[RMDB]
Structure probing data (2A3) for a 207-nucleotide construct. Values cover nucleotides 27 to 156. Conditions: 150 mM KOAc, 10 mM MgCl2 and 150 mM bicine (pH 8.5), 24 C.

RNA sequence: GGGAACGACUCGAGUAGAGUCGAAAAGUCACGUAAAAACUGGGGAACUUUAAAAUAAACGCAGACGAUAAUUUCGCGAUAGCAGCCUAGUUGCUGCUCGUCCCUCUUAGUCCUCCUGCCGACUAAGACUGGACGUCAUUAUGCAGGGAACUACUUUCCUUAUUUAUAUCUUCGGAUAUAAAUAAGGAAAAGAAACAACAACAACAAC
Reactivity to 2A3 in 0.01 (KOAc 150mM, MgCl2 10mM, bicine 150mM(pH8.5), 24C), signal-to-noise 6, nucleotides 027 to 156: g040u030c010a010c070g030u060a020a030a030a140a150c090u080g010g010g000g040a030a030c030u130u180u190a100a160a080a100u150a050a090a020c050g010c070a050g030a040c050g030a050u070a160a170u150u160u150c050g010c030g050a030u030a040g000c000a000g000c000c010u120a090g030u140u160g000c000u000g000c000u000c000g000u000c000c010c000u000c000u000u000a000g000u010c000c030u050c010c000u060g010c030c060g000a000c000u000a000a000g000a010c030u060g000g000a010c000g020u050c020a050u030u270a080u220g010c010a000g000g000g030a030a050c030u080a030c020u080u010u000